[RMDB]
Notes:
Conditions: 150 mM KOAc, 10 mM MgCl2 and 150 mM bicine (pH 8.5), 24 C. Structure probing data (DMS and 2A3) for a 207-nucleotide construct. Values cover nucleotides 27 to 156. High 2A3 reactivity points to a flexible backbone, as in loops and unpaired stretches. The DMS profile rests on 2,568 reads. It was measured as part of the RMDB library M2RFPK.
RNA sequence: GGGAACGACUCGAGUAGAGUCGAAAAAGAUCGAUUACGAUCGAUCAAUGAUGCCCCUCACCCUCCUCUGAAGAUCCCAGGUGGGCGAGGGAACGGAGCACGGGAUCACGAGCAGUACGCUGCUCGAAAAAGAACUAGACCUUCGGGUCUAGUUCAAUCCUAACUUGUUGUUCGCAACAAGUUAGGAAAAAGAAACAACAACAACAAC
Reactivity to DMS in 0.01 (KOAc 150mM, MgCl2 10mM, bicine 150mM(pH8.5), 24C), signal-to-noise 1, nucleotides 027 to 156: a120g010a020u000c010g030a090u000u000a230c220g030a130u000c000g010a030u000c020a300a180u010g000a160u000g000c110c000c000c010u000c020a070c010c010c010u000c050c050u000c030u030g010a120a070g000a080u000c010c030c010a140g010g000u010g000g020g030c010g000a030g000g000g030a020a010c060g000g020a150g000c090a080c020g010g040g000a090u000c050a290c020g000a020g000c010a040g010u000a090c230g080c020u000g000c000u000c010g000a020a070a090a100a090g010a020a020c010u000a010g000a020c000c010u010u000c300g030g080g000u000c000u010a000g000u000u000c020a050a090
Reactivity to 2A3 in 0.01 (KOAc 150mM, MgCl2 10mM, bicine 150mM(pH8.5), 24C), signal-to-noise 2, nucleotides 027 to 156: a000g000a010u010c010g000a010u050u080a050c220g040a010u000c000g000a000u000c000a000a040u170g080a060u230g040c000c000c000c020u010c010a030c010c000c010u020c000c020u020c050u090g060a120a030g020a040u010c000c000c020a010g020g010u000g010g000g000c010g000a000g000g000g000a040a040c100g050g090a110g100c080a040c100g010g010g000a000u030c010a000c060g000a000g000c000a000g000u070a030c300g020c100u000g020c000u000c020g010a000a000a000a020a000g010a000a000c000u000a000g000a010c000c000u020u080c250g100g000g000u000c000u000a000g000u000u000c000a000a000